[RMDB]
RNA sequence: GGGAACGACUCGAGUAGAGUCGAAAAAGGCACUUCGCAAUGUGUGCUCAAACAUUGCUUGUUCAAACACGCUUCACAAUGUGCGACAAAGAAACAUUGUUAUAAGAGCUAAUGUUUUAACAUUGGCAAAACCGAGUUAGCUUCGGCUAACUCGGAACUGCCUUAAUUACUUCGGUAAUUAAGGCAGAAAAGAAACAACAACAACAAC
Reactivity to 2A3 in 0.01 (KOAc 150mM, MgCl2 10mM, bicine 150mM(pH8.5), 24C), signal-to-noise 6, nucleotides 027 to 156: a000g180g000c020a000c010u030u020c040g000c010a000a010u000g000u000g010u010g010c110u110c220a050a050a000c000a010u000u010g000c000u070u140g120u110u130c110a060a070a040c070a020c070g000c000u010u010c010a000c000a000a010u000g000u010g010c020g070a080c140a080a150a030g100a020a040a000c000a000u000u010g020u060u060a180u050a150a120g040a010g010c000u010a010a000u010g030u010u140u050u210a100a030c000a010u010u010g020g000c000a030a040a000a040c000c000g000a000g010u000u000a000g000c010u040u040c230g020g000c000u000a000a000c000u000c000g000g000a000a000
Reactivity to DMS in 0.01 (KOAc 150mM, MgCl2 10mM, bicine 150mM(pH8.5), 24C), signal-to-noise 3, nucleotides 027 to 156: a080g020g030c010a040c040u010u000c080g070c050a080a060u000g030u000g010u000g030c060u010c140a060a070a040c080a100u000u010g010c040u000u010g000u000u000c050a130a140a120c060a070c020g000c050u000u000c080a080c050a030a030u020g040u030g040c080g010a190c060a070a080a100g000a130a070a030c020a020u000u010g000u000u010a150u010a070a120g000a300g010c000u010a010a030u000g030u000u000u000u020a080a100c020a030u000u010g010g010c020a060a020a090a120c010c000g020a010g010u000u000a020g040c000u000u000c300g070g000c000u000a020a000c010u000c000g000g000a000a030
Description: Structure probing data (2A3 and DMS) for a 207-nucleotide construct. For 2A3, 16,306 sequencing reads were counted. As a SHAPE reagent, 2A3 marks flexible, mostly unpaired nucleotides at the ribose 2'-OH. Source: RMDB library M2RFPK, as collected in RNAgym. Values are in units of 0.01, from 0 to 300, in steps of 10. Conditions: 150 mM KOAc, 10 mM MgCl2 and 150 mM bicine (pH 8.5), 24 C. High DMS reactivity at an A or C suggests that its Watson-Crick edge is free. The DMS profile rests on 5,689 reads.